[RMDB]
RNA sequence: GGGAACGACUCGAGUAGAGUCGAAAAAGUUAGGUUCGCUAUGGUGCAACUCUUUAAGACAAUAACGAACUAAUUCUAAGCAAGUAAUGGAGAAAUGCCAGGGUCACUAUCUAGCCAUAAUAGUGCUGUAAGUGACUUAGAUUCGUCUAAGUCACAACAUUAGGAUUGACUUCGGUCAAUCCUAAUGAAAAGAAACAACAACAACAAC
Reactivity to 2A3 in 0.01 (KOAc 150mM, MgCl2 10mM, bicine 150mM(pH8.5), 24C), signal-to-noise 8, nucleotides 027 to 156: a000g070u060u040a040g020g070u030u020c030g020c030u030a020u090g060g020u100g060c060a090a190c080u100c080u140u200u210a120a030g050a030c020a050a040u080a100a020c020g010a020a010c010u030a020a030u100u060c050u110a050a020g030c040a060a030g030u110a080a110u130g060g020a030g030a090a090a010u070g020c020c030a070g020g030g000u040c010a010c030u020a020u070c030u030a050g020c000c000a030u040a140a040u030a090g070u060g000c030u050g050u100a190a080g000u000g000a000c000u000u000a000g000a000u020u050c080g020u000c140u000a010a000g000u000c000a000c000a010a010
Reactivity to DMS in 0.01 (KOAc 150mM, MgCl2 10mM, bicine 150mM(pH8.5), 24C), signal-to-noise 5, nucleotides 027 to 156: a080g030u010u000a070g020g020u000u000c030g020c020u000a040u010g020g040u000g040c060a100a120c120u010c080u000u000u000a110a140g020a140c060a080a050u000a020a040c030g010a030a040c030u000a050a080u010u000c040u010a080a110g000c050a070a090g030u000a070a080u000g000g010a100g000a060a070a060u010g010c010c020a070g000g010g030u000c020a060c030u000a040u000c040u000a070g030c040c030a080u000a050a080u000a070g020u010g030c030u000g010u000a060a130g000u000g000a040c000u000u000a010g010a080u000u000c300g030u010c000u010a000a020g010u000c010a010c010a030a090

Structure probing data (2A3 and DMS) for a 207-nucleotide construct. The DMS profile rests on 13,378 reads. For 2A3 the reverse transcriptase was SuperScript II with manganese.